[RMDB]
RNA sequence: GGGAACGACUCGAGUAGAGUCGAAAAAGCUCGUGGCCCGCGUCGGCGACGAGCCUGCGCUGGCGAUCCCUGGAUUCGGCCAGGGCCCGCAGCAUCGUGUUGAAGCUUUCCGUGAGCCGGGCCAGCACGGAUUUACGGAUUUCGAUCCGUAAAUCCGAAAAGAAACAACAACAACAAC
Reactivity to DMS in 0.01 (KOAc 150mM, MgCl2 10mM, bicine 150mM(pH8.5), 24C), signal-to-noise 1, nucleotides 027 to 126: a090g000c010u000c000g040u000g000g020c000c000c030g030c210g040u000c120g000g030c030g000a040c050g010a070g020c050c000u000g040c100g000c040u000g010g040c030g020a150u000c040c010c000u010g000g000a260u020u030c150g010g000c000c030a010g000g000g000c080c050c000g000c040a030g000c070a100u020c070g000u000g000u000u010g030a120a100g010c070u000u000u000c010c020g030u000g030a140g030c060c020g010g010g000c010c000a050g030c050a190
Reactivity to 2A3 in 0.01 (KOAc 150mM, MgCl2 10mM, bicine 150mM(pH8.5), 24C), signal-to-noise 1, nucleotides 027 to 126: a000g010c000u000c010g000u060g050g000c000c040c010g190c120g100u100c120g060g030c020g050a060c020g000a030g040c000c000u020g000c010g050c000u090g000g050c030g000a060u050c000c010c000u030g020g000a170u220u210c130g150g000c090c000a000g000g010g000c010c000c010g020c020a000g060c000a050u060c030g090u050g000u150u170g020a060a040g030c020u100u040u000c040c050g040u030g110a060g130c130c010g030g020g000c000c010a030g010c080a010